[RMDB]
Annotation:
Chemical mapping of a 177-nucleotide RNA with 2A3 and DMS. For 2A3 the reverse transcriptase was SuperScript II with manganese. The DMS profile rests on 689 reads.
RNA sequence: GGGAACGACUCGAGUAGAGUCGAAAAAUCGCAUUACUCCUUGCUCUCACUGAGGGCAGCGUAAUUUUCGGGAACGCGUACCCAUCCUUCCAUUAGAAUUCUGGCGCUGCGACUCAUGAUCGCGCGAAUAUCGCUGAGUCUUCGGACUCAGCGAUAUAAAAGAAACAACAACAACAAC
Reactivity to 2A3 in 0.01 (KOAc 150mM, MgCl2 10mM, bicine 150mM(pH8.5), 24C), signal-to-noise 1, nucleotides 027 to 126: a000u080c010g000c000a010u050u060a020c030u010c040c040u050u070g000c000u010c000u010c000a300c200u200g020a010g000g030g000c000a000g030c020g000u050a000a120u070u110u100u300c050g000g010g010a160a000c010g030c010g030u020a000c010c010c000a070u050c010c000u150u000c030c000a100u000u190a100g080a130a160u110u080c040u090g010g020c010g000c000u090g050c000g050a010c010u030c140a080u210g120a220u060c010g000c010g080c000g060a070
Reactivity to DMS in 0.01 (KOAc 150mM, MgCl2 10mM, bicine 150mM(pH8.5), 24C), signal-to-noise 1, nucleotides 027 to 126: a020u000c010g020c050a050u000u010a110c000u020c110c060u000u000g010c010u000c010u000c000a240c300u000g010a000g000g000g040c000a010g010c300g020u000a040a020u020u000u000u010c090g030g020g000a040a060c220g020c000g000u010a110c020c000c050a100u000c020c010u000u010c070c050a100u000u020a120g010a150a080u000u010c120u010g010g010c000g020c000u010g050c010g010a020c010u010c300a130u000g020a190u000c040g030c020g030c040g000a150